[RMDB]
RNA sequence: GGGAACGACUCGAGUAGAGUCGAAAAUCGCUGUUCGCAGCGAAGUGUCACCUUUGUGAGUAAAGAGCUACCCACCCAGAGGAAGGUCCCAUUGGGACCUUCUCCCCACCUGGAGGCUCUUUACUCACUCUGGUAUUGUUAGUCGUUCGCGACUAAAAAUAACUAUCGGUUUCGACCGAUAGUUAUUAAAAGAAACAACAACAACAAC
Reactivity to DMS in 0.01 (KOAc 150mM, MgCl2 10mM, bicine 150mM(pH8.5), 24C), signal-to-noise 1, nucleotides 027 to 156: u000c000g050c020u010g030u020u000c300g030c070a000g040c000g000a020a120g040u020g050u030c190a060c000c020u000u000u000g000u000g010a040g040u020a000a010a000g010a040g000c020u000a150c050c000c020a120c050c010c070a110g020a090g000g000a040a030g000g000u000c000c070c020a300u000u000g080g080g020a020c000c000u000u000c000u010c000c020c030c030a170c060c010u000g030g010a300g020g050c010u040c030u010u000u000a050c010u010c010a000c000u000c040u010g040g020u000a150u020u000g020u010u000a080g000u000c000g010u000u000c120g080c000g000a190c020u000a020a110a090
This 207-nucleotide RNA was probed chemically with DMS. Values cover nucleotides 27 to 156. It was measured as part of the RMDB library RNAMAK.